[RMDB]
RNA sequence: GGGAACGACUCGAGUAGAGUCGAAAAAGCUAAAUAUUGGUGCGAGACCGAUAGCGAACAAGUACCGUGAGGGAAAGAUGAAAAGAACUUUGAAAAGAGAGUUAAAGAGUACCUGAAACUGCUGAAACCCCAUUGACCUUUUCGAAGGUCAAUGGGGAAAAGAAACAACAACAACAAC
Reactivity to 2A3 in 0.01 (KOAc 150mM, MgCl2 10mM, bicine 150mM(pH8.5), 24C), signal-to-noise 1, nucleotides 027 to 126: a000g130c130u110a230a130a030u140a090u090u040g000g000u000g020c010g020a050g000a000c000c110g060a070u000a000g090c050g000a000a100c050a000a020g000u000a020c010c010g000u050g080a050g000g030g000a000a100a000g080a000u110g020a000a110a000a000g130a030a030c060u120u230u150g070a080a040a000a000g130a160g000a000g040u000u000a100a000a050g000a020g000u080a000c000c060u050g000a040a050a050c020u000g100c000u080g000a210a000a000
Reactivity to DMS in 0.01 (KOAc 150mM, MgCl2 10mM, bicine 150mM(pH8.5), 24C), signal-to-noise 1, nucleotides 027 to 126: a190g060c030u000a030a060a090u040a030u090u020g000g010u000g000c200g030a050g010a000c020c030g000a070u000a020g000c140g000a160a180c050a000a000g000u030a060c000c020g000u080g000a210g010g000g010a060a030a150g000a120u020g000a070a110a130a070g010a020a000c000u010u010u010g000a030a010a050a010g000a110g000a010g000u000u040a050a100a020g000a100g000u000a040c020c020u000g000a050a080a130c140u000g000c050u040g050a060a190a050